Structure probing data (2A3 and DMS) for a 207-nucleotide construct. The RNA was probed in 150 mM KOAc, 10 mM MgCl2 and 150 mM bicine (pH 8.5) at 24 C. Reactivities are given for positions 27 through 156. Source: RMDB library M2RFPK, as collected in RNAgym.
RNA sequence: GGGAACGACUCGAGUAGAGUCGAAAAGUAUCCCUAGAUGAUAAAACACCGCACAUGGCUCCUAAGAGCGGUUAAAUUAGCAAGUAAUGCAAAUUACGCGAGGUAACGCAUGGCCUAGGCUCGUUAGAAAAGGGAGAAUCCUUCGGGAUUCUCCCAACCUCUUUUAUCAGUUCGCUGAUAAAAGAGGAAAAGAAACAACAACAACAAC
Reactivity to 2A3 in 0.01 (KOAc 150mM, MgCl2 10mM, bicine 150mM(pH8.5), 24C), signal-to-noise 1, nucleotides 027 to 156: g080u060a100u150c020c000c020u030a080g070a200u110g000a010u160a140a110a050a050c050a010c030c020g000c020a030c000a190u080g050g040c070u050c050c030u080a140a000g060a000g080c030g000g000u010u030a000a050a050u100u040a010g050c020a040a050g070u090a030a070u050g050c060a000a120a120u120u080a070c020g000c000g020a030g010g050u050a030a000c050g030c050a080u070g010g020c000c010u000a020g020g000c020u000c030g040u020u050a050g090a060a100a040a010g030g000g000a000g020a000a000u000c010c000u010u020c110g090g020g000a000u000u000c000u000c000c000c000a000a000
Reactivity to DMS in 0.01 (KOAc 150mM, MgCl2 10mM, bicine 150mM(pH8.5), 24C), signal-to-noise 1, nucleotides 027 to 156: g010u010a180u000c000c000c000u020a120g000a160u010g000a170u000a060a140a110a110c120a060c000c000g160c020a120c040a080u040g020g060c010u020c070c050u010a180a170g000a130g030c010g020g000u000u000a080a070a100u000u000a030g020c030a070a150g020u000a030a040u020g000c140a100a070a090u000u000a000c020g020c020g000a150g100g030u000a070a100c030g020c020a040u000g010g020c020c000u000a170g000g010c020u000c020g070u000u000a200g010a070a070a110a090g020g010g010a060g000a020a030u010c000c010u000u000c180g040g020g030a030u010u000c000u020c010c000c010a010a020